[RMDB]
Overview
The record gives the reactivity of an RNA of 177 nucleotides to DMS and 2A3.
RNA sequence: GGGAACGACUCGAGUAGAGUCGAAAAGCUGUUUUCCGCCUUUCUGGAUGGGCUCAAACAGGUCGGUGCGCAGGCGCAGCCGCUGGGUGUUGAAGCCGAGCUUGCGCGCGGCGAUCUCGAAGCGGCAGACGUAGGUCCUAUUCGUAGGACCUACGUCAAAAGAAACAACAACAACAAC
Reactivity to DMS in 0.01 (KOAc 150mM, MgCl2 10mM, bicine 150mM(pH8.5), 24C), signal-to-noise 2, nucleotides 027 to 126: g020c030u000g000u000u000u000u010c060c090g010c040c020u000u000u000c190u000g010g010a110u000g010g020g010c110u000c120a020a030a040c060a050g020g010u000c050g030g020u000g010c020g030c050a030g010g000c020g030c240a070g020c030c030g040c020u000g000g010g000u000g020u000u010g010a200a280g010c020c000g030a030g000c010u010u010g010c060g000c010g020c000g000g010c010g000a100u000c020u000c040g000a090a050g020c010g020g000c030a140
Reactivity to 2A3 in 0.01 (KOAc 150mM, MgCl2 10mM, bicine 150mM(pH8.5), 24C), signal-to-noise 2, nucleotides 027 to 126: g050c000u000g030u040u020u050u040c020c020g000c010c000u150u250u160c110u140g150g000a120u070g050g010g010c020u040c120a030a050a020c010a000g000g060u060c020g030g030u060g000c020g010c010a010g000g020c040g000c120a070g000c010c020g000c020u050g030g000g000u080g090u110u190g090a050a010g000c000c020g000a010g010c020u030u060g000c010g000c020g000c000g090g000c070g010a070u000c010u000c070g070a050a010g000c000g020g000c010a000

DMS adducts were read by reverse transcription with MarathonRT. High 2A3 reactivity points to a flexible backbone, as in loops and unpaired stretches.